[RMDB]
RNA sequence: GGGAACGACUCGAGUAGAGUCGAAAAAGGUACAAAAGGUUCUACAGAUUGUGGACAAUACUGUUUCCAGGCAAAAAAUGGACUGCAAGGCUGAAGAAAUUUCAAAGUUGAAAGGUUAUCACAUGAAACAAUGGACACAGUUCGCUGUGUCCAUUGUAAAAGAAACAACAACAACAAC
Reactivity to DMS in 0.01 (KOAc 150mM, MgCl2 10mM, bicine 150mM(pH8.5), 24C), signal-to-noise 1, nucleotides 027 to 126: a050g030g010u000a040c170a100a080a040a100g060g020u060u010c010u000a060c060a050g000a100u010u010g010u000g010g000a050c080a130a040u010a030c050u000g040u010u000u000c020c020a190g000g070c120a000a030a010a100a050a080u000g000g020a060c080u000g020c070a100a030g010g000c070u000g000a050a030g000a030a080a120u000u020u000c040a030a060a140g010u000u000g010a070a020a110g000g000u000u010a050u000c140a040c130a060u010g000a170a070